[RMDB]
Source information
Chemical mapping of a 207-nucleotide RNA with DMS and 2A3. Source: RMDB library M2RFPK, as collected in RNAgym. DMS adducts were read by reverse transcription with MarathonRT. For 2A3, 2,914 sequencing reads were counted. Reactivities are given for positions 27 through 156. The RNA was probed in 150 mM KOAc, 10 mM MgCl2 and 150 mM bicine (pH 8.5) at 24 C.
RNA sequence: GGGAACGACUCGAGUAGAGUCGAAAAUCGCUAAACCGCGGCAAGUGGAGUUAGCGAGAGGAGGCUGGGUUUUGGCUUCCUUAAGCAAUCGGUCACCGAGAAGGUGUGGUCGUUACCGUGAAAUUCCGUGACAAAAUAACGUUCGCGUUAUUUUGAACUACUCUAGUGUGUUCGCACACUAGAGUAGAAAAGAAACAACAACAACAAC
Reactivity to DMS in 0.01 (KOAc 150mM, MgCl2 10mM, bicine 150mM(pH8.5), 24C), signal-to-noise 2, nucleotides 027 to 156: u000c010g020c000u000a040a100a100c030c020g030c060g020g020c170a130a130g100u000g010g000a140g020u000u000a040g000c000g000a140g000a020g010g020a020g020g030c040u010g050g000g040u010u010u030u000g010g020c000u000u000c020c010u000u000a030a300g010c080a060a050u000c030g000g000u010c010a110c010c000g000a140g030a080a140g020g050u000g080u000g020g010u000c040g010u000u000a020c050c020g000u000g020a080a020a210u000u000c020c020g000u000g000a290c020a020a010a030a030u000a020a020c000g020u010u010c300g000c040g060u000u000a000u000u010u010u000g000a070a180
Reactivity to 2A3 in 0.01 (KOAc 150mM, MgCl2 10mM, bicine 150mM(pH8.5), 24C), signal-to-noise 4, nucleotides 027 to 156: u010c000g000c010u000a010a000a040c020c000g030c030g200g030c280a180a150g000u060g020g070a280g030u020u010a000g020c000g000a000g000a000g010g000a000g010g000c020u070g120g000g220u090u070u220u240g050g010c000u000u000c000c010u000u010a040a030g020c010a020a070u060c020g010g010u020c010a000c010c030g070a090g090a300a060g100g030u130g030u040g050g020u000c020g020u000u070a070c060c010g010u050g050a080a060a090u110u050c030c040g080u130g030a020c000a000a000a000a010u000a000a000c010g010u020u050c270g020c000g060u020u000a000u000u010u010u010g000a030a020